An RNA of 170 nucleotides, treated with DMS and 2A3 and read out base by base. Values cover nucleotides 27 to 129. The 2A3 profile rests on 23,118 reads. Values are in units of 0.01, from 0 to 300, in steps of 10. It was measured as part of the RMDB library 15KLIB. The RNA was probed in 150 mM KOAc, 10 mM MgCl2 and 150 mM bicine (pH 8.5) at 24 C. For DMS, 19,094 sequencing reads were counted.

[RMDB]
RNA sequence: GGGAACGACUCGAGUAGAGUCGAAAACAUUUGAGGGACAAAGCCGCCCCCGGGCGCUCCCCUCGGAGAUGUUCCAGGUGGGUUCACAUCCCCAACCCGCGGGCCGGCUACUCUUCUUUCCCUUCUCCAACCAGUCAGUUCGCUGACUGGAAAAGAAACAACAACAACAAC
Reactivity to DMS in 0.01 (KOAc 150mM, MgCl2 10mM, bicine 150mM(pH8.5), 24C), signal-to-noise 5, nucleotides 027 to 129: c160a120u040u070u050g000a090g000g000g000a000c150a190a180a050g000c040c040g000c080c010c000c020c030g000g030g050c190g000c090u060c000c000c010c000u030c150g040g000a000g000a000u020g040u060u050c000c000a060g000g000u030g000g030g020u020u030c170a100c040a190u020c000c000c000c000a050a120c000c000c000g020c260g050g030g060c160c000g000g000c010u010a080c070u020c040u050u030c000u010u020u020c000c010c030u000u000c000u050c030c050a160a190
Reactivity to 2A3 in 0.01 (KOAc 150mM, MgCl2 10mM, bicine 150mM(pH8.5), 24C), signal-to-noise 7, nucleotides 027 to 129: c090a110u100u090u160g010a020g010g030g020a040c070a090a250a010g000c010c000g010c000c000c000c010c010g000g000g000c050g030c040u030c010c010c010c000u030c090g050g010a050g020a100u240g120u250u030c010c000a010g020g070u100g060g060g000u170u190c110a050c020a240u130c010c000c000c000a020a040c010c000c000g010c050g010g010g000c150c060g000g000c010u010a030c000u020c000u100u050c020u020u020u020c000c000c000u010u020c030u040c020c010a070a090